[RMDB]
RNA sequence: GGGAACGACUCGAGUAGAGUCGAAAACAACACUUCGGUGUUGCUCAAUCCGUAGGGCAGAACUACUCGGAGCAGUGCGUUGAAACUCACUUCGAAAGAGGUGAGUGGAGCACCAGGUCGAGCUGCCCUAAACGGUGCCACGUGACUUCGGUCACAAAAUAGCACUUAGGUUCGCCUAAGUGCUAUUAAAAGAAACAACAACAACAAC
Reactivity to 2A3 in 0.01 (KOAc 150mM, MgCl2 10mM, bicine 150mM(pH8.5), 24C), signal-to-noise 4, nucleotides 027 to 156: c010a000a010c010a010c000u080u090c300g180g000u000g000u030u010g000c030u050c100a040a090u030c000c000g010u000a000g000g010g000c020a000g020a060a100c130u190a060c000u300c000g040g000a130g040c040a010g000u000g000c010g160u230u030g000a010a000a000c010u000c000a000c000u000u020c030g060a110a070a070g000a000g010g000u000g010a010g000u000g000g000a000g000c000a000c020c020a030g020g070u050c000g000a000g000c000u000g010c010c000c010u000a000a000a000c000g000g000u020g050c050c020a120c130g000u000g000a000c000u040u060c230g090g000u010c030a010c030a050a090
Reactivity to DMS in 0.01 (KOAc 150mM, MgCl2 10mM, bicine 150mM(pH8.5), 24C), signal-to-noise 2, nucleotides 027 to 156: c020a040a040c040a000c010u000u020c230g080g020u000g000u010u010g000c000u000c080a130a080u000c000c010g070u000a080g050g030g040c000a070g000a090a110c060u000a190c010u000c010g040g010a090g040c120a150g030u000g010c010g020u000u020g000a260a160a070c010u000c000a010c000u010u000c010g030a140a180a190g010a030g010g010u000g000a010g000u000g000g000a230g020c000a000c000c020a080g040g000u000c010g010a060g000c000u000g030c060c000c000u000a010a010a050c030g020g020u000g000c040c000a060c300g010u010g020a060c020u010u000c300g020g000u010c000a020c000a010a060

An RNA of 207 nucleotides, treated with 2A3 and DMS and read out base by base. Source: RMDB library RNAMAK, as collected in RNAgym. In probing experiments dimethyl sulfate is read out at A N1 and C N3, which are open when not base-paired. 2A3 adducts were read by reverse transcription with SuperScript II with manganese. The 2A3 profile rests on 5,259 reads. For DMS the reverse transcriptase was MarathonRT.